[RMDB]
RNA sequence: GGGAACGACUCGAGUAGAGUCGAAAAUGUGGAGCAAUCGUCAGCGGUAACAUACCAAAGUUUGCCGGUCAGUCGCCAGAGUUACGCUUCACCGCCAGCUCUGAUCAUUCCCCAGCGGCAGUCGCUACAGUCAAAAUUAGUUCGCUAAUUUUGACUGAAAAGAAACAACAACAACAAC
Reactivity to 2A3 in 0.01 (KOAc 150mM, MgCl2 10mM, bicine 150mM(pH8.5), 24C), signal-to-noise 4, nucleotides 027 to 126: u120g010u060g040g000a050g000c020a030a140u090c050g100u070c080a030g060c020g020g020u050a070a030c020a080u170a110c050c000a030a070a050g050u050u090u100g030c030c020g030g040u060c050a010g040u040c000g020c050c010a010g000a010g060u080u060a050c050g000c010u030u040c030a020c030c010g020c010c010a010g000c000u000c000u030g070a110u070c030a050u040u040c000c000c000c000a020g010c000g040g000c030a040g100u110c030g000c050u030a050
Reactivity to DMS in 0.01 (KOAc 150mM, MgCl2 10mM, bicine 150mM(pH8.5), 24C), signal-to-noise 7, nucleotides 027 to 126: u000g010u000g010g010a090g010c040a090a080u000c090g020u000c070a110g020c070g010g010u000a060a070c090a100u010a200c090c090a050a130a080g000u010u010u000g030c030c010g010g020u000c090a070g010u000c050g010c060c020a050g000a050g010u000u000a060c180g010c020u000u000c230a060c160c120g010c010c050a110g020c010u000c010u000g000a090u000c070a140u000u000c010c000c010c120a070g010c010g000g010c060a080g000u000c070g020c090u010a120

Record summary:
Chemical mapping of a 177-nucleotide RNA with 2A3 and DMS. Reactivities are given for positions 27 through 126. The reactions ran in a buffer of 150 mM KOAc, 10 mM MgCl2 and 150 mM bicine (pH 8.5), at 24 C.